The record gives the reactivity of an RNA of 177 nucleotides to DMS and 2A3. Reactivities are given for positions 27 through 126. Conditions: 150 mM KOAc, 10 mM MgCl2 and 150 mM bicine (pH 8.5), 24 C. DMS adducts were read by reverse transcription with MarathonRT. As a SHAPE reagent, 2A3 marks flexible, mostly unpaired nucleotides at the ribose 2'-OH. The data come from the RNA Mapping Database (RMDB), library OK1LIB. The 2A3 profile rests on 18,303 reads. For 2A3 the reverse transcriptase was SuperScript II with manganese.

RNA sequence: GGGAACGACUCGAGUAGAGUCGAAAAGAAAAAGUGGGUGAAUUUCAUUGGCGCACCGCCUUCGGCGCACUGUCGCCGUCCGCUUUAGUCAAUGUCGCGGUCUGUUUGUCGGUCACAUUCUGCCGCAGGUGAGGUAAAUAUUCGUAUUUACCUCACCAAAAGAAACAACAACAACAAC
Reactivity to DMS in 0.01 (KOAc 150mM, MgCl2 10mM, bicine 150mM(pH8.5), 24C), signal-to-noise 7, nucleotides 027 to 126: g010a060a070a020a040a030g030u010g020g000g010u010g000a070a100u020u020u020c050a060u000u010g010g000c010g010c060a030c090c030g000c030c020u010u010c060g010g000c010g010c010a130c170u020g000u030c020g010c010c010g020u010c020c030g000c030u000u010u010a080g010u010c070a060a070u020g010u020c100g010c020g010g000u010c060u000g010u000u010u010g010u010c090g010g010u010c070a060c070a050u010u010c020u000g000c010c020g000c070a130
Reactivity to 2A3 in 0.01 (KOAc 150mM, MgCl2 10mM, bicine 150mM(pH8.5), 24C), signal-to-noise 9, nucleotides 027 to 126: g090a010a090a010a010a010g070u090g020g040g010u080g060a160a220u110u170u170c060a040u040u080g020g000c020g000c030a040c050c020g020c020c000u060u060c070g020g000c010g020c050a140c220u230g080u300c060g000c010c000g000u010c000c010g010c000u040u050u060a030g050u060c030a040a090u070g060u140c070g010c010g010g030u050c090u090g070u060u060u020g060u070c080g060g030u110c040a010c010a060u050u000c020u060g010c000c000g010c040a040